[RMDB]
About this RNA
Structure probing data (2A3 and DMS) for a 177-nucleotide construct. Source: RMDB library OK2TRN, as collected in RNAgym. The RNA was probed in 150 mM KOAc, 10 mM MgCl2 and 150 mM bicine (pH 8.5) at 24 C.
RNA sequence: GGGAACGACUCGAGUAGAGUCGAAAAUCACGUCGUACCUCGUCGCGCUGACGGUGUUCAUUCCGGUGAGCGGCUGGAUCGCGGAGCACUUCGGCGCGAAGCGCGUGUUCAUCGCCGCGAUCGCGAACGUACCACCGGGAUUCGUCCCGGUGGUACGAAAAGAAACAACAACAACAAC
Reactivity to 2A3 in 0.01 (KOAc 150mM, MgCl2 10mM, bicine 150mM(pH8.5), 24C), signal-to-noise 2, nucleotides 027 to 126: u070c030a040c030g130u140c010g000u080a100c000c040u060c040g120u010c000g000c000g010c010u020g030a060c080g050g020u010g030u030u080c080a080u070u000c010c020g030g030u090g080a180g110c140g060g000c030u060g000g000a010u070c040g040c170g230g000a010g000c000a000c000u030u020c040g020g010c010g000c000g000a000a010g050c020g020c010g020u060g000u000u110c080a120u090c060g000c030c010g070c020g080a090u090c090g010c010g050a090a060
Reactivity to DMS in 0.01 (KOAc 150mM, MgCl2 10mM, bicine 150mM(pH8.5), 24C), signal-to-noise 2, nucleotides 027 to 126: u020c060a040c050g000u000c030g010u000a130c040c060u000c150g010u000c010g020c010g040c020u000g000a050c180g030g000u000g010u000u010c070a150u010u000c010c000g020g010u000g000a120g050c100g000g000c030u000g010g000a020u010c100g030c080g030g010a040g050c020a030c030u010u000c030g030g000c040g000c010g010a030a070g030c050g040c050g020u010g010u010u000c130a080u010c100g000c040c010g000c030g000a060u000c050g000c050g000a020a190
Values cover nucleotides 27 to 126. 2A3 adducts were read by reverse transcription with SuperScript II with manganese. The DMS profile rests on 2,210 reads. DMS adducts were read by reverse transcription with MarathonRT.